Chemical mapping of a 207-nucleotide RNA with 2A3 and DMS. DMS (dimethyl sulfate) methylates the pairing face of unpaired adenines and cytosines. 2A3 adducts were read by reverse transcription with SuperScript II with manganese. It was measured as part of the RMDB library RNAMAK. The 2A3 profile rests on 4,730 reads. The RNA was probed in 150 mM KOAc, 10 mM MgCl2 and 150 mM bicine (pH 8.5) at 24 C.

[RMDB]
RNA sequence: GGGAACGACUCGAGUAGAGUCGAAAAUCCUAAGUCCAAGAUGAGGAUUGGUCCAUACAGUACAUUGUCAGCGAAUCGGAAACGAUUCGCUUGGAUUUAUGUACCGAGGUGGACCUCGAUUCCUUGGAUAUGGAAAAGGACAUCUUCGGAUGUCCAAACCCUCUAUUGGAUUCGUCCAAUAGAGGGUAAAAGAAACAACAACAACAAC
Reactivity to 2A3 in 0.01 (KOAc 150mM, MgCl2 10mM, bicine 150mM(pH8.5), 24C), signal-to-noise 4, nucleotides 027 to 156: u030c000c000u040a080a030g030u000c000c000a000a020g070a230u200g000a040g000g020a030u030u070g020g000u000c000c000a000u020a080c000a000g010u000a000c000a010u030u010g020u040c010a000g000c000g010a000a000u000c000g020g060a080a060a020c000g000a000u010u010c010g000c010u010u040g000g000a000u140u240u220a010u010g000u000a000c000c010g050a090g070g000u000g000g000a000c000c000u000c000g020a020u010u010c000c010u010u000g000g000a000u010a070u110g070g020a030a100a080a090g030g000a000c010a010u020c000u020u070c230g140g000a010u000g000u000c000c010a000a020
Reactivity to DMS in 0.01 (KOAc 150mM, MgCl2 10mM, bicine 150mM(pH8.5), 24C), signal-to-noise 2, nucleotides 027 to 156: u000c000c000u010a050a220g030u000c000c000a030a020g010a180u000g020a240g000g010a280u010u000g020g020u000c000c010a010u000a100c020a040g020u000a020c010a010u000u000g030u010c010a050g040c010g030a020a020u010c000g010g000a200a150a300c020g000a010u010u000c000g010c010u000u000g000g010a010u020u000u000a000u010g020u000a000c000c000g000a250g020g060u000g000g000a000c010c010u000c010g000a300u010u000c030c010u000u030g010g020a030u000a300u000g000g000a020a100a150a210g050g020a040c000a000u000c010u000u030c300g050g010a040u000g000u000c010c000a010a110